Description: Chemical mapping of a 177-nucleotide RNA with DMS and 2A3.
RNA sequence: GGGAACGACUCGAGUAGAGUCGAAAAUGGCCAUGCUUCGGCAUGGCCACUUGCGUAGCUCGGAAAUUUUUUUAGCUACGCUUAAUAAAAAUUUGCGAUAUAAGUUGGGGUUGUUCGCAACCCCAAACGUUGUAUGAUAGUUCGCUAUCAUACAACGAAAAGAAACAACAACAACAAC
Reactivity to DMS in 0.01 (KOAc 150mM, MgCl2 10mM, bicine 150mM(pH8.5), 24C), signal-to-noise 2, nucleotides 027 to 126: u000g010g000c000c010a010u000g010c020u000u010c190g010g010c020a010u000g000g020c010c000a000c010u000u000g000c010g000u000a010g020c020u010c170g010g010a020a100a060u000u000u000u000u000u000u000a030g010c010u000a010c020g000c000u000u000a050a050u000a020a060a050a070a090u010u000u000g010c080g010a110u000a100u010a080a140g010u000u000g000g000g000g020u000u000g000u010u010c170g000c010a030a030c000c000c000c000a000a000a060
Reactivity to 2A3 in 0.01 (KOAc 150mM, MgCl2 10mM, bicine 150mM(pH8.5), 24C), signal-to-noise 2, nucleotides 027 to 126: u050g000g000c010c000a000u010g020c000u060u070c250g090g030c000a000u000g000g020c000c010a000c000u020u050g000c000g000u000a000g010c030u010c150g110g300a190a210a240u300u180u010u040u010u040u060a050g000c000u000a000c000g020c000u000u090a070a060u060a010a140a000a020a040u050u140u160g030c020g030a020u030a010u030a290a080g090u060u000g000g000g000g000u020u000g050u070u030c120g030c040a020a020c000c000c000c000a000a000a000